Chemical mapping of a 177-nucleotide RNA with 2A3 and DMS. For DMS the reverse transcriptase was MarathonRT. Reactivities are given for positions 27 through 126. For DMS, 4,383 sequencing reads were counted. For 2A3, 2,054 sequencing reads were counted. It was measured as part of the RMDB library RFMREP. For 2A3 the reverse transcriptase was SuperScript II with manganese.
RNA sequence: GGGAACGACUCGAGUAGAGUCGAAAAGCGAUGGCGUGCCUUUUGUUUAAUGAGUCUGCGAGUCAGUGUUUGUGGCAAGACUAAGGGCUUCCGGCCCGGAGUCGCAGCGAAAGCAAGUCCGAACAGGGAGUCCAAUAUAGUUCGCUAUAUUGGACUCAAAAGAAACAACAACAACAAC
Reactivity to 2A3 in 0.01 (KOAc 150mM, MgCl2 10mM, bicine 150mM(pH8.5), 24C), signal-to-noise 2, nucleotides 027 to 126: g070c030g060a070u070g000g050c050g040u010g010c020c000u060u060u040u040g150u020u130u110a120a070u110g020a010g110u030c020u020g010c040g050a020g040u010c040a030g010u040g040u130u040u070g130u120g020g010c040a070a060g000a000c000u030a020a040g000g040g010c000u100u110c140c120g030g000c020c000c000g000g000a000g000u020c000g000c040a010g000c000g040a030a010a000g010c010a020a030g020u010c020c020g000a030a020c000a030g140g020
Reactivity to DMS in 0.01 (KOAc 150mM, MgCl2 10mM, bicine 150mM(pH8.5), 24C), signal-to-noise 5, nucleotides 027 to 126: g010c060g030a090u000g010g020c050g020u000g010c030c030u020u000u020u000g010u000u000u000a050a110u000g010a080g010u000c030u010g020c060g000a120g010u010c020a080g010u000g000u000u010u020g020u030g030g000c050a090a080g010a020c020u010a190a140g010g000g010c010u000u010c300c150g020g010c000c010c000g020g000a040g010u000c000g010c140a130g030c030g000a080a050a140g000c020a060a090g000u000c020c030g010a060a080c160a110g000g000